[RMDB]
RNA sequence: GGGAACGACUCGAGUAGAGUCGAAAAGAUAUGGACUGGUCUCUAGCGUGGGCUAUGAAGUAACGAGAGGUUUAUGUCGGAAACGACAUAAACCUUAAGUUAUGGAGCCUCGGGCCAGUCCUAAGUCCCUUCCCUAUGAGUUCGCUCAUAGGGAAGGAAAAGAAACAACAACAACAAC
Reactivity to 2A3 in 0.01 (KOAc 150mM, MgCl2 10mM, bicine 150mM(pH8.5), 24C), signal-to-noise 1, nucleotides 027 to 126: g010a040u170a010u240g000g000a000c010u040g040g010u030c100u130c230u300a160g220c070g300u300g040g010g000c000u110a300u300g030a000a040g020u020a000a000c020g020a050g000a010g110g060u000u000u040a020u000g000u010c010g010g120a100a040a040c010g000a000c000a000u010a000a000a000c010c000u000u000a000a000g000u010u000a010u000g000g040a000g000c000c020u000c030g000g000g000c010c020a010g000u020c000c000u000a000a000g020u000c010
Reactivity to DMS in 0.01 (KOAc 150mM, MgCl2 10mM, bicine 150mM(pH8.5), 24C), signal-to-noise 2, nucleotides 027 to 126: g000a110u010a250u010g000g000a000c010u010g020g020u000c000u010c300u000a130g030c170g030u010g010g040g020c010u000a220u030g010a130a190g010u000a000a020c000g000a300g000a020g000g010u000u000u000a000u000g000u000c000g000g000a160a100a220c020g000a000c000a000u000a000a000a000c010c000u000u000a000a290g010u000u000a010u000g010g000a060g030c000c000u000c040g010g000g000c010c000a040g000u000c000c000u010a000a110g000u020c080
Chemical mapping of a 177-nucleotide RNA with 2A3 and DMS. 2A3 is a SHAPE reagent: it acylates the 2'-hydroxyl of flexible nucleotides of all four kinds. 2A3 adducts were read by reverse transcription with SuperScript II with manganese.